[RMDB]
RNA sequence: GGGAACGACUCGAGUAGAGUCGAAAAGCCCGGUUCGCCGGGCACCGAAUCCUAAGUCCUUCGGUAGUUUCAGAACUUGGAUUUACCAUCGGAAACGAUGGUUGUCAGUUCUGGCUAUAAUCGAAGGAUAUGGAAACUCGUCUUUUUCGAAAGACAAACAAAAGACACAAUUCGUUGUGUCUUUUGUAAAAGAAACAACAACAACAAC
Reactivity to DMS in 0.01 (KOAc 150mM, MgCl2 10mM, bicine 150mM(pH8.5), 24C), signal-to-noise 1, nucleotides 027 to 156: g050c000c010c010g070g000u000u000c180g020c090c050g090g050g170c020a010c020c040g000a080a190u000c000c020u000a080a270g000u010c010c030u000u000c000g050g160u000a010g010u000u010u000c000a000g070a010a020c000u030u010g060g010a050u000u000u000a040c000c000a030u010c010g010g000a300a170a280c010g010a020u000g010g020u000u010g000u000c010a030g000u010u000c000u020g000g010c020u000a040u000a140a090u010c020g010a070a000g000g020a040u000a070u010g000g010a110a080a150c120u000c070g010u000c020u000u000u000u010u000c200g030a040a010a020g040a040c010a140a250
Reactivity to 2A3 in 0.01 (KOAc 150mM, MgCl2 10mM, bicine 150mM(pH8.5), 24C), signal-to-noise 3, nucleotides 027 to 156: g000c000c000c000g000g030u050u040c090g030c050c000g040g010g010c000a010c010c000g060a060a140u050c000c010u040a060a060g040u000c000c000u000u000c010g030g000u010a030g010u030u080u300c010a000g000a020a000c010u130u300g120g020a020u240u120u250a020c000c000a000u010c000g040g000a110a050a030c010g000a000u000g010g000u000u000g000u010c010a010g000u000u010c010u000g000g030c000u030a030u050a200a190u130c010g000a000a000g000g000a010u000a000u010g000g000a030a080a080c100u080c120g030u020c020u040u050u030u060u110c160g060a050a000a010g030a000c050a020a070